The data come from the RNA Mapping Database (RMDB), library OK3TST. This 207-nucleotide RNA was probed chemically with DMS and 2A3. The 2A3 profile rests on 1,944 reads. Conditions: 150 mM KOAc, 10 mM MgCl2 and 150 mM bicine (pH 8.5), 24 C.

RNA sequence: GGGAACGACUCGAGUAGAGUCGAAAACAAUCACUGUGCUUGCUCUAAUCUGCACGCUGCUGUACAUGAAAUUCAGGCAGAGGCGAAUCUUUAUCGAUGAGAAAAAAAUGCCUUGAUCGCUAACACCGGCUUUCUGUCUGCAGAAUGAAAGCAAUCAUGGUAUACCUAAGUUCGCUUAGGUAUACCAAAAAGAAACAACAACAACAAC
Reactivity to DMS in 0.01 (KOAc 150mM, MgCl2 10mM, bicine 150mM(pH8.5), 24C), signal-to-noise 2, nucleotides 027 to 156: c010a090a110u000c090a080c070u010g000u020g030c020u010u000g000c030u020c090u010a130a200u000c010u020g010c010a110c080g010c020u010g000c020u000g000u020a090c060a090u010g010a050a080a180u000u000c040a070g000g050c020a030g010a270g020g030c010g000a040a070u010c040u000u010u010a300u020c080g020a130u020g010a200g010a030a010a030a090a050a070a130u020g000c010c030u000u010g010a060u000c020g020c040u020a050a080c080a030c050c040g000g000c120u000u010u010c020u010g000u000c110u000g000c060a050g010a190a070u000g010a040a040a130g010c040a050a130u010c050a140
Reactivity to 2A3 in 0.01 (KOAc 150mM, MgCl2 10mM, bicine 150mM(pH8.5), 24C), signal-to-noise 4, nucleotides 027 to 156: c030a020a080u150c080a040c110u080g020u040g020c000u020u030g000c010u010c020u130a110a300u100c010u050g000c010a010c060g040c020u040g000c000u050g090u190a060c020a090u140g090a050a120a040u180u140c070a110g020g000c010a000g000a020g050g000c030g050a110a100u040c050u000u170u140a160u080c030g050a040u170g030a060g130a080a040a020a040a000a010a090u090g030c000c000u020u070g100a060u050c030g000c020u020a080a040c010a040c060c020g080g040c020u020u100u060c040u030g030u010c040u020g000c000a010g030a110a030u100g020a070a030a000g040c000a000a010u100c030a040